Background:
This 177-nucleotide RNA was probed chemically with DMS and 2A3. For 2A3, 1,002 sequencing reads were counted. 2A3 adducts were read by reverse transcription with SuperScript II with manganese. Reactivities are given for positions 27 through 126. DMS adducts were read by reverse transcription with MarathonRT. For DMS, 2,241 sequencing reads were counted.

RNA sequence: GGGAACGACUCGAGUAGAGUCGAAAAAUCAAGGGAAGCGUGCCGGUGCAGGCAAGAGACCACCGUAAGCGUCGUUGCGACCAAAUAAGCGCCGAAUCACUUCAGCGCGACUACGCUCUCGCUGCCAAAGUUCCCGCAGCUUCGGCUGUGGGAACUUAAAAGAAACAACAACAACAAC
Reactivity to DMS in 0.01 (KOAc 150mM, MgCl2 10mM, bicine 150mM(pH8.5), 24C), signal-to-noise 2, nucleotides 027 to 126: a100u020c040a040a100g000g020g030a050a080g010c010g000u000g020c080c010g000g050u020g000c040a020g020g040c040a030a100g000a110g010a040c070c080a030c010c050g010u000a070a070g000c010g000u000c000g000u010u000g000c030g020a160c070c090a030a070a110u000a010a150g000c000g040c070c040g000a040a110u010c190a040c170u000u000c060a070g000c000g010c010g080a050c130u020a010c010g040c000u040c020u010c000g010c100u000g010c040c060a100
Reactivity to 2A3 in 0.01 (KOAc 150mM, MgCl2 10mM, bicine 150mM(pH8.5), 24C), signal-to-noise 1, nucleotides 027 to 126: a000u000c000a020a020g000g030g060a040a000g070c000g000u000g080c080c000g000g000u010g020c010a000g060g000c000a040a000g000a010g000a100c000c000a000c020c000g030u070a000a000g000c000g050u000c000g000u000u000g030c030g000a100c010c030a020a070a030u120a050a050g060c000g000c000c000g100a020a040u300c120a140c170u080u050c070a080g000c010g000c000g000a000c000u120a060c000g000c000u000c000u000c030g110c000u040g010c000c000a000